Source: RMDB library RFMREP, as collected in RNAgym. The record gives the reactivity of an RNA of 177 nucleotides to DMS and 2A3. The RNA was probed in 150 mM KOAc, 10 mM MgCl2 and 150 mM bicine (pH 8.5) at 24 C.
RNA sequence: GGGAACGACUCGAGUAGAGUCGAAAAUUUCCGCAAGGAAUGUCAUCGCGACCGCCCCGCCGGUGUCUGGACACCCGCAGUACGUCGCAGCUUCGAUCCCGUAUCGGGUGCCUCUCAAGCCUGCCGCCAUGUAUGGCUUCUUCGGAAGCCAUACAUGAAAAGAAACAACAACAACAAC
Reactivity to DMS in 0.01 (KOAc 150mM, MgCl2 10mM, bicine 150mM(pH8.5), 24C), signal-to-noise 2, nucleotides 027 to 126: u000u010u000c000c000g060c280a120a120g010g000a060a020u010g010u000c070a100u000c070g030c070g010a050c050c080g010c050c050c010c040g020c030c130g020g000u000g000u000c060u020g030g020a110c060a010c020c000c080g000c200a050g010u000a060c160g010u000c050g010c030a080g000c060u000u000c070g000a110u000c020c030c040g020u000a060u010c030g010g000g010u000g000c010c020u010c060u000c050a080a080g020c030c020u000g010c030c020g010c110
Reactivity to 2A3 in 0.01 (KOAc 150mM, MgCl2 10mM, bicine 150mM(pH8.5), 24C), signal-to-noise 1, nucleotides 027 to 126: u010u010u000c000c010g040c030a030a060g030g030a110a000u100g010u020c090a050u140c060g040c020g070a060c010c040g020c020c020c000c040g000c020c020g010g060u040g000u010c060u140g020g030a020c000a010c010c000c010g000c050a020g020u110a010c030g010u030c040g000c050a050g020c020u100u090c070g070a120u060c040c000c020g050u090a110u110c030g000g000g000u030g020c000c010u060c000u000c030a060a030g000c040c000u050g020c030c030g050c000